[RMDB]
RNA sequence: GGGAACGACUCGAGUAGAGUCGAAAAGACCGCUGAAUGCGGAAGUACUAGAUCAACUAGAAAGUAGAUAAAUACAAAAGCUACGUCUCGAAACUAGUUGAUCUAGUUCAAUCGAGACGUAGCAAGACGUACCCAUGGAGUUCGCUCCAUGGGUACGAAAAGAAACAACAACAACAAC
Reactivity to 2A3 in 0.01 (KOAc 150mM, MgCl2 10mM, bicine 150mM(pH8.5), 24C), signal-to-noise 3, nucleotides 027 to 126: g030a000c030c000g000c000u130g300a220a140u300g000c000g010g060a030a000g090u080a100c000u000a030g030a130u100c010a070a010c030u050a060g140a240a140a000g130u120a040g060a190u280a130a300a000u230a040c140a000a060a000a020g000c000u000a000c000g000u000c000u000c000g110a070a100a080c050u020a020g000u000u100g030a040u010c000u000a000g000u000u060c010a010a000u010c000g000a000g000a000c000g000u000a010g020c000a000a000g000a000
Reactivity to DMS in 0.01 (KOAc 150mM, MgCl2 10mM, bicine 150mM(pH8.5), 24C), signal-to-noise 1, nucleotides 027 to 126: g000a030c040c040g010c000u000g060a190a150u040g000c000g000g000a020a030g000u010a180c030u000a000g010a120u030c060a030a050c000u020a030g000a160a070a140g000u000a070g060a150u050a120a150a030u020a040c110a140a080a080a050g000c000u000a000c030g000u000c000u000c000g020a020a080a070c000u000a000g010u010u070g000a050u040c000u000a000g000u020u020c090a070a020u000c040g000a000g000a020c000g000u000a000g040c000a000a010g000a100